[RMDB]
RNA sequence: GGGAACGACUCGAGUAGAGUCGAAAAGAUAUGGACGGGCCAUCGAUCGUAUCGGGUCGGAAACGACCUUACGGGAGGCCGUCCUAAGUCAAAUCGGUUCAAUCCUGUUCGCAGGAUUGAACCGAAAGUACUGCUAGUACUUCGGUACUAGCAGUACAAAAGAAACAACAACAACAAC
Reactivity to DMS in 0.01 (KOAc 150mM, MgCl2 10mM, bicine 150mM(pH8.5), 24C), signal-to-noise 2, nucleotides 027 to 126: g000a060u000a300u010g000g010a030c000g050g010g040c000c020a290u010c100g000a100u010c060g010u000a020u030c200g000g010g010u000c000g010g030a030a100a260c010g020a000c030c000u000u000a010c000g000g010g000a050g010g020c000c000g000u000c000c000u000a010a090g010u000c030a100a150a100u000c000g020g000u000u000c010a010a000u000c000c000u000g010u000u010c230g000c020a010g010g000a010u010u000g000a000a000c010c000g000a000a000a070
Reactivity to 2A3 in 0.01 (KOAc 150mM, MgCl2 10mM, bicine 150mM(pH8.5), 24C), signal-to-noise 2, nucleotides 027 to 126: g010a020u090a060u130g000g010a040c110g060g220g300c020c020a300u300c050g050a090u090c000g020u010a020u190c100g040g000g000u020c040g000g000a010a110a000c020g000a000c000c000u010u000a020c000g030g000g000a020g000g000c000c000g020u000c000c000u020a110a000g060u000c040a000a010a190u060c010g000g030u000u000c000a000a000u010c000c020u000g070u080u080c300g010c090a020g000g000a010u000u010g010a010a000c000c000g000a000a000a000

Structure probing data (DMS and 2A3) for a 177-nucleotide construct.
DMS adducts were read by reverse transcription with MarathonRT.
Conditions: 150 mM KOAc, 10 mM MgCl2 and 150 mM bicine (pH 8.5), 24 C.
The data come from the RNA Mapping Database (RMDB), library TTRDEL.